[RMDB]
RNA sequence: GGGAACGACUCGAGUAGAGUCGAAAACGUUGAGCAGCGCCAAAGUAUUAUGCUGGCUUAUUAUCAAGGGCUUUCUCAUGGGGAAAUCUCUGUUCAUUUACAGCACCCCCUCGGUACGAUAAAAAGCAACUUUAUUCGGGUUCGCCCGAAUAAAGUUAAAAGAAACAACAACAACAAC
Reactivity to DMS in 0.01 (KOAc 150mM, MgCl2 10mM, bicine 150mM(pH8.5), 24C), signal-to-noise 1, nucleotides 027 to 126: c090g000u000u000g030a090g040c060a040g000c030g000c050c030a070a110a150g010u000a100u000u020a050u010g000c030u000g000g000c130u030u010a080u010u000a040u030c030a120a090g020g000g010c070u000u000u000c020u010c020a150u000g020g010g020g000a020a010a020u010c020u000c010u000g010u000u000c120a070u010u020u000a150c050a030g000c130a080c030c000c010c030c000u010c050g010g020u000a030c130g010a050u030a000a070a130a170a090g010c130